[RMDB]
RNA sequence: GGGAACGACUCGAGUAGAGUCGAAAAAUGUGGACUCCUCACUACGUAUUGUUUGAAUGACUGCUUCUUGCACUAAUAGAACUGAAGGACUUAUUUGGUGUCCAUAGCUGUGUCUUGCAUACAAAGGCUCGCGUAUAUAAUUCGUUAUAUACGCGAGAAAAGAAACAACAACAACAAC
Reactivity to 2A3 in 0.01 (KOAc 150mM, MgCl2 10mM, bicine 150mM(pH8.5), 24C), signal-to-noise 6, nucleotides 027 to 126: a000u110g020u080g040g030a050c030u020c020c020u030c030a030c070u100a030c040g070u080a060u080u160g080u050u030u090g140a140a070u070g070a040c030u010g010c010u050u040c020u070u100g020c010a010c040u000a010a090u030a100g050a100a020c060u090g060a150a030g070g010a020c020u100u080a090u120u100u080g020g000u010g000u010c030c000a040u140a020g000c030u040g010u000g010u100c010u030u040g000c000a040u050a100c030a010a120a040g120g000
Reactivity to DMS in 0.01 (KOAc 150mM, MgCl2 10mM, bicine 150mM(pH8.5), 24C), signal-to-noise 6, nucleotides 027 to 126: a080u010g020u000g010g000a100c050u010c020c020u000c100a070c090u010a070c120g000u010a080u010u010g020u000u000u000g000a100a070u000g010a050c120u000g010c030u000u010c080u000u010g010c010a040c030u000a040a050u000a110g000a060a090c060u010g010a130a110g020g010a100c040u000u000a080u000u000u010g020g010u010g000u000c090c020a030u000a030g000c050u000g010u000g010u000c020u000u000g010c070a070u000a060c090a070a110a150g000g010